[RMDB]
RNA sequence: GGGAACGACUCGAGUAGAGUCGAAAACAAUCAGCCUGUCGAAACCGCUGAUGGCGCAGCGCACCUACGCCGAGACGAUGAACACCAUCACGCACGAGCUGGCGCACGCGCUGGUCGGCCCCGACCACGGGCAUGAUGCCGUGUGGGCGCGCAAGCACCACCUAGUAACAUUCGUGUUACUAGGUGGAAAAGAAACAACAACAACAAC
Reactivity to 2A3 in 0.01 (KOAc 150mM, MgCl2 10mM, bicine 150mM(pH8.5), 24C), signal-to-noise 5, nucleotides 027 to 156: c060a010a020u080c020a020g030c020c030u120g100u170c080g060a140a030a030c020c020g000c030u030g000a040u090g030g010c050g000c030a020g000c020g010c030a090c040c040u100a040c060g010c010c000g040a050g030a050c070g090a110u040g040a100a040c070a070c170c020a040u030c020a010c040g050c010a030c060g040a040g040c030u030g050g000c010g010c010a030c080g010c000g000c010u030g000g040u030c020g040g010c000c010c020c000g040a090c020c040a040c040g000g020g010c040a070u230g040a090u130g050c000c030g040u040g010u030g060g010g000c030g000c010g010c050a070a010g020c010a020
Reactivity to DMS in 0.01 (KOAc 150mM, MgCl2 10mM, bicine 150mM(pH8.5), 24C), signal-to-noise 2, nucleotides 027 to 156: c040a110a040u000c010a090g040c030c050u000g000u000c100g030a150a150a110c070c010g000c030u000g020a060u010g030g040c020g040c030a110g040c020g030c080a060c050c010u010a020c020g030c000c030g040a160g000a300c020g020a150u000g010a130a170c140a160c110c040a040u010c010a110c080g000c030a300c030g020a120g000c000u010g000g000c060g010c020a110c040g010c000g040c050u010g000g010u000c020g040g030c020c010c050c030g010a070c020c030a040c050g000g030g000c040a020u000g020a110u010g000c000c040g060u000g030u010g010g000g000c010g010c000g000c020a080a100g010c060a270